Structure probing data (DMS and 2A3) for a 177-nucleotide construct.
RNA sequence: GGGAACGACUCGAGUAGAGUCGAAAAUGGCCAUCGAUAUGCGCAUGGGGGUUCUCUUUCAGCAUGGCGCGCUGUUUUCCGCGCUGAACGUGCUGGAGAACAUUCAGGUGCCGAUGCGUGAAUAUCAUGACGUAAAUCCAUUCGUGGAUUUACGUCAAAAAGAAACAACAACAACAAC
Reactivity to DMS in 0.01 (KOAc 150mM, MgCl2 10mM, bicine 150mM(pH8.5), 24C), signal-to-noise 4, nucleotides 027 to 126: u010g010g010c030c010a070u000c050g010a090u010a050u010g000c010g010c010a020u000g000g010g000g000g010u010u000c000u000c000u010u010u010c040a010g020c000a010u000g000g010c040g010c000g030c080u000g010u000u000u010u010c130c120g000c000g000c010u010g010a070a080c140g030u000g000c000u000g010g000a030g000a020a000c010a090u000u000c100a060g000g020u000g010c000c010g000a010u000g000c080g010u010g010a090a070u000a050u010c080a180
Reactivity to 2A3 in 0.01 (KOAc 150mM, MgCl2 10mM, bicine 150mM(pH8.5), 24C), signal-to-noise 1, nucleotides 027 to 126: u070g080g040c020c000a020u030c050g010a030u020a040u290g000c020g010c010a030u010g040g020g000g000g000u010u020c020u010c000u010u120u080c010a000g000c000a010u000g020g010c010g000c000g000c040u030g100u090u050u120u000c020c020g000c000g000c020u050g050a110a010c040g000u000g000c000u000g010g000a000g000a000a000c000a000u070u080c020a030g100g030u070g100c010c010g010a000u000g000c070g020u020g100a040a010u100a070u120c120a120

The RNA was probed in 150 mM KOAc, 10 mM MgCl2 and 150 mM bicine (pH 8.5) at 24 C. It was measured as part of the RMDB library OK2TST.